[RMDB]
RNA sequence: GGGAACGACUCGAGUAGAGUCGAAAACCGAGUUGGCAUCAAUGUUGGCCCUGUGGUGGCUGGAGUGAUUGGCGCUCGCAGGCCCCAGUACGACAUCUGGGGAAACACAGUCAACGUGGCCAGUCGGCUGCUCUUUCAUAUUCGUAUGAAAGAGCAGAAAAGAAACAACAACAACAAC
Reactivity to DMS in 0.01 (KOAc 150mM, MgCl2 10mM, bicine 150mM(pH8.5), 24C), signal-to-noise 5, nucleotides 027 to 126: c010c000g010a040g020u010u000g010g000c010a130u010c090a090a110u000g010u000u000g010g000c020c070c100u010g000u000g000g020u000g010g000c000u000g020g010a060g030u010g000a300u000u000g020g010c060g010c010u000c030g020c010a030g000g010c000c000c000c000a000g010u000a070c170g000a150c300a090u010c010u010g000g000g000g000a060a040a080c100a060c120a070g000u000c020a020a020c010g020u000g000g010c000c010a030g000u000c010g000g000
Reactivity to 2A3 in 0.01 (KOAc 150mM, MgCl2 10mM, bicine 150mM(pH8.5), 24C), signal-to-noise 4, nucleotides 027 to 126: c010c000g000a030g150u150u050g020g000c050a150u080c060a250a300u090g010u010u010g020g000c020c060c080u050g000u020g000g090u070g080g010c000u020g060g020a050g040u100g050a230u180u300g150g140c040g010c020u020c030g140c040a000g040g020c000c000c000c000a010g010u020a040c260g080a050c120a100u070c020u000g000g000g010g030a000a020a000c100a000c000a000g010u010c000a000a010c020g000u020g000g000c000c010a010g030u020c010g020g000
The record gives the reactivity of an RNA of 177 nucleotides to DMS and 2A3. For DMS, 6,780 sequencing reads were counted. Reactivities are given for positions 27 through 126.